[RMDB]
An RNA of 177 nucleotides, treated with DMS and 2A3 and read out base by base.
Source: RMDB library OK1LIB, as collected in RNAgym.
Conditions: 150 mM KOAc, 10 mM MgCl2 and 150 mM bicine (pH 8.5), 24 C.
The DMS profile rests on 20,085 reads.
DMS adducts were read by reverse transcription with MarathonRT.

RNA sequence: GGGAACGACUCGAGUAGAGUCGAAAAAGAACUGCAAACGAUAAUAAUCUCUAUGUAGGUGCACCAGCUUUAGCUGCCGCUUAAUCCUACGAGGAUUGAAGGUGUGACGGGCAACAGACCCGGAAAAGAUAUUACGUCGUUUCGACGACGUAAUAUCAAAAGAAACAACAACAACAAC
Reactivity to DMS in 0.01 (KOAc 150mM, MgCl2 10mM, bicine 150mM(pH8.5), 24C), signal-to-noise 8, nucleotides 027 to 126: a060g010a100a070c060u010g010c070a050a060a100c110g000a110u020a090a090u030a030a040u000c010u020c030u000a130u030g030u000a000g000g010u010g000c090a120c240c000a020g010c010u010u020u020a110g020c000u000g020c210c100g000c090u030u010a070a070u020c010c000u000a020c050g010a070g010g000a010u000u000g010a120a110g000g010u020g010u010g000a120c020g000g000g000c030a130a090c230a110g010a130c010c010c000g010g000a020a040a080a090
Reactivity to 2A3 in 0.01 (KOAc 150mM, MgCl2 10mM, bicine 150mM(pH8.5), 24C), signal-to-noise 4, nucleotides 027 to 126: a000g080a040a010c030u070g010c060a080a070a040c080g040a030u040a150a050u110a070a070u100c070u000c010u090a160u230g020u030a020g010g030u040g020c020a030c020c030a010g030c030u130u120u100a050g000c000u030g030c040c040g030c040u050u080a020a020u060c000c010u030a050c120g020a060g030g010a010u020u070g050a070a020g060g000u050g020u030g080a030c000g000g000g020c010a110a070c030a140g150a250c000c000c000g020g000a030a070a000a010